The data come from the RNA Mapping Database (RMDB), library OK1LIB.
This 177-nucleotide RNA was probed chemically with 2A3.
RNA sequence: GGGAACGACUCGAGUAGAGUCGAAAAUUUGGUGCUGCAGUGGGACCUGCAAGUUGCCUGUCCUUCUUCUCCAAGAUGAGAUCAAUCUGCUCUACUGGCAUGCGGUUGUUACCGAUUUUGAGAAGAGGCAUCCCCGGUCGUUCGCGACCGGGGAUGCAAAAGAAACAACAACAACAAC
Reactivity to 2A3 in 0.01 (KOAc 150mM, MgCl2 10mM, bicine 150mM(pH8.5), 24C), signal-to-noise 1, nucleotides 027 to 126: u140u110u030g000g000u020g000c020u020g000c000a020g080u150g010g140g000a020c000c000u000g030c000a040a030g060u180u200g070c020c000u000g030u040c000c000u050u050c000u000u000c000u040c000c050a020a020g020a100u160g050a000g010a270u140c060a030a000u030c020u150g150c020u140c030u170a120c140u110g180g060c070a030u120g040c020g020g030u000u000g040u070u070a020c000c050g110a130u000u000u000u000g020a050g030a020a020g010a010g000
About this RNA
Values cover nucleotides 27 to 126.